The record gives the reactivity of an RNA of 177 nucleotides to DMS and 2A3.
RNA sequence: GGGAACGACUCGAGUAGAGUCGAAAAUAAUCUGACUGGCUAUGAGGUCAGACCUCAUACGCAUCUCAUAUCAUGUCAGUCAUGGGGUGCCGAGACCUGGGUUAAUUCACAAACUCAGAAUUGUGAGGAUAGUUUACUAUUUCGAUAGUGAGCUAUCAAAAGAAACAACAACAACAAC
Reactivity to DMS in 0.01 (KOAc 150mM, MgCl2 10mM, bicine 150mM(pH8.5), 24C), signal-to-noise 9, nucleotides 027 to 126: u030a080a110u020c020u000g010a020c020u010g000g010c110u020a040u010g020a100g000g010u020c140a090g010a290c070c010u010c040a030u000a100c260g010c030a030u010c020u010c020a030u000a080u010c090a080u040g010u020c130a070g010u010c090a030u010g000g010g000g020u000g010c020c070g000a090g000a120c130c000u000g010g010g000u000u000a040a080u020u010c100a040c100a030a020a030c020u000c030a040g010a100a110u010u020g010u000g000a070g010
Reactivity to 2A3 in 0.01 (KOAc 150mM, MgCl2 10mM, bicine 150mM(pH8.5), 24C), signal-to-noise 9, nucleotides 027 to 126: u110a000a060u040c020u020g030a020c000u040g050g080c060u080a040u140g090a050g030g010u030c040a020g060a080c000c000u030c000a030u060a050c070g000c020a060u010c010u000c020a040u050a060u130c100a080u150g150u160c060a030g040u030c020a030u050g000g000g000g020u020g000c010c010g030a040g020a050c010c010u000g010g000g000u020u040a070a060u190u100c050a020c020a060a040a010c020u020c020a010g040a050a120u100u070g040u030g030a030g010

Reactivities are given for positions 27 through 126.